[RMDB]
RNA sequence: GGGAACGACUCGAGUAGAGUCGAAAAGGUAACCUGAUCGAGGCAAUACUCGAUCGUUCAUACCUGAAUACAUAGGGUAUGAAACGCGAAACCCGCUGAAGUGAAACAUCUCAGUAAGCGGAGGAAAAGCGGUGUACUGAUUCGUCAGUACACCGCUAAAAGAAACAACAACAACAAC
Reactivity to DMS in 0.01 (KOAc 150mM, MgCl2 10mM, bicine 150mM(pH8.5), 24C), signal-to-noise 1, nucleotides 027 to 126: g000g020u010a090a090c040c000u000g000a000u000c010g000a000g010g010c260a180a100u050a190c000u000c010g010a000u000c000g000u000u000c000a120u000a000c000c000u000g000a140a150u010a080c150a020u000a250g010g050g000u000a000u000g000a000a040a050c020g050c100g000a100a090a080c000c000c000g000c000u000g000a100a100g000u020g000a050a250a130c270a050u000c050u010c000a000g000u000a090a050g010c030g000g000a060g000g000a030a000a040
Reactivity to 2A3 in 0.01 (KOAc 150mM, MgCl2 10mM, bicine 150mM(pH8.5), 24C), signal-to-noise 2, nucleotides 027 to 126: g090g000u110a130a050c000c000u000g000a040u000c000g000a010g030g000c180a070a040u060a150c000u000c020g000a000u000c000g020u000u000c000a030u000a000c000c040u050g020a010a000u110a050c040a000u050a030g010g040g000u000a000u010g000a100a000a020c060g010c020g050a160a030a020c000c000c000g030c010u010g010a120a110g130u030g060a130a170a110c230a260u120c010u010c000a000g000u000a010a000g010c000g000g000a060g110g000a060a170a000

Structure probing data (DMS and 2A3) for a 177-nucleotide construct.
DMS adducts were read by reverse transcription with MarathonRT.
The 2A3 profile rests on 983 reads.